[RMDB]
RNA sequence: GGGAACGACUCGAGUAGAGUCGAAAAAGCGGCCUGUGUUCCUCAGGGUUCGUAAUACAUCCCGACACAAACGGCUCAUGUAUCGAUAAACGCACAUCAGCACUUCAUUGAGGAAAACUGUGUAGUAGAGCAUGUAUGUGUUCGCACAUACAUGCUCAAAAGAAACAACAACAACAAC
Reactivity to DMS in 0.01 (KOAc 150mM, MgCl2 10mM, bicine 150mM(pH8.5), 24C), signal-to-noise 2, nucleotides 027 to 126: a110g000c020g000g000c000c000u000g010u000g000u000u000c000c000u000c010a290g000g050g020u000u020c000g030u000a050a050u030a070c130a140u000c000c030c000g000a110c140a070c140a020a170a100c120g000g000c040u060c100a030u000g010u000a030u040c070g080a150u000a070a070a040c050g020c300a050c030a000u000c070a150g060c000a020c090u000u010c130a140u010u000g000a010g030g000a120a080a100a090c290u000g020u020g000u000a010g010u000a120
Reactivity to 2A3 in 0.01 (KOAc 150mM, MgCl2 10mM, bicine 150mM(pH8.5), 24C), signal-to-noise 5, nucleotides 027 to 126: a000g030c010g010g000c000c010u040g030u030g020u040u000c010c010u040c020a010g050g010g000u130u300c000g050u130a170a010u030a130c050a100u050c050c000c010g050a020c040a010c010a110a150a020c040g030g000c000u020c020a030u080g030u040a100u110c040g060a070u190a160a200a040c070g000c010a010c000a040u030c020a010g060c040a060c060u100u070c100a140u030u240g000a050g010g000a000a010a030a050c070u080g040u040g050u170a080g040u040a020